[RMDB]
RNA sequence: GGGAACGACUCGAGUAGAGUCGAAAAGAUAUGGAAGCCUGAUGAGCUAUGAAGUGGCUCGGAUCGGAAACGAUCCGAGGCCAUGGAGCUCUCAGGCUUCCUAAGUCAAAACAACCCUUCGGGGUUGCGUUAACAGAUUGUUCGCAAUCUGUUAACGAAAAGAAACAACAACAACAAC
Reactivity to 2A3 in 0.01 (KOAc 150mM, MgCl2 10mM, bicine 150mM(pH8.5), 24C), signal-to-noise 2, nucleotides 027 to 126: g020a000u050a010u160g000g000a010a000g000c000c000u040g140a300u230g000a090g000c000u110a300u300g060a100a000g040u010g010g000c010u010c000g000g000a010u000c000g000g040a070a050a020c030g000a010u020c010c010g030a030g060g040c000c000a010u010g000g000a000g010c000u010c000u020c000a000g000g010c010u000u010c000c000u000a000a010g010u000c000a000a060a000a000c010a000a010c000c010c000u010u080c240g050g000g060g020u010u010g010
Reactivity to DMS in 0.01 (KOAc 150mM, MgCl2 10mM, bicine 150mM(pH8.5), 24C), signal-to-noise 4, nucleotides 027 to 126: g010a050u010a300u010g010g000a010a000g010c010c010u000g000a030u020g010a010g020c000u000a230u020g000a160a300g000u010g000g010c010u010c010g000g010a010u010c010g020g000a140a130a230c000g010a010u000c000c000g000a020g030g010c010c000a000u000g010g000a020g000c000u000c000u000c000a000g000g010c000u010u000c010c000u000a010a050g000u010c020a130a070a160a240c020a010a010c000c000c000u000u020c200g030g000g000g000u000u000g010